[RMDB]
RNA sequence: GGGAACGACUCGAGUAGAGUCGAAAAAAGCAUGACUCUCUAUUGUCUCUCUAUUCAGAACUUAGUAUGGUGAUGGAUCGAUAGAGAGACAUUCCUGCAUCUGUCAUCCAUCACCAUAAAAACAAAACUAAUAUGGCAGGUUCGCCUGCCAUAUUAGAAAAGAAACAACAACAACAAC
Reactivity to DMS in 0.01 (KOAc 150mM, MgCl2 10mM, bicine 150mM(pH8.5), 24C), signal-to-noise 2, nucleotides 027 to 126: a050a080g010c070a060u010g000a090c050u000c020u000c040u000a150u010u000g000u000c000u000c020u000c010u010a000u000u010c110a140g000a070a130c250u000u000a120g030u000a000u000g030g010u000g000a010u000g010g000a020u000c110g010a000u000a000g010a000g000a010g010a000c010a040u000u000c010c010u010g000c140a110u010c100u010g010u000c080a050u000c000c000a010u000c000a020c000c000a010u000a000a020a080a080a010c190a030a080a070a120
Reactivity to 2A3 in 0.01 (KOAc 150mM, MgCl2 10mM, bicine 150mM(pH8.5), 24C), signal-to-noise 2, nucleotides 027 to 126: a000a000g080c120a090u150g070a130c010u040c010u020c020u110a090u120u150g000u010c000u000c000u010c010u020a000u020u130c070a030g060a230a110c040u140u080a100g120u060a190u040g070g000u010g000a000u000g010g000a020u090c090g010a000u030a010g000a010g010a010g000a000c000a000u000u000c000c000u000g020c000a120u120c070u160g150u130c020a020u000c000c000a000u000c010a010c000c010a000u000a000a040a000a000a000c060a020a140a010a010
An RNA of 177 nucleotides, treated with DMS and 2A3 and read out base by base.
Values cover nucleotides 27 to 126.
For DMS the reverse transcriptase was MarathonRT.
The data come from the RNA Mapping Database (RMDB), library M2PK90.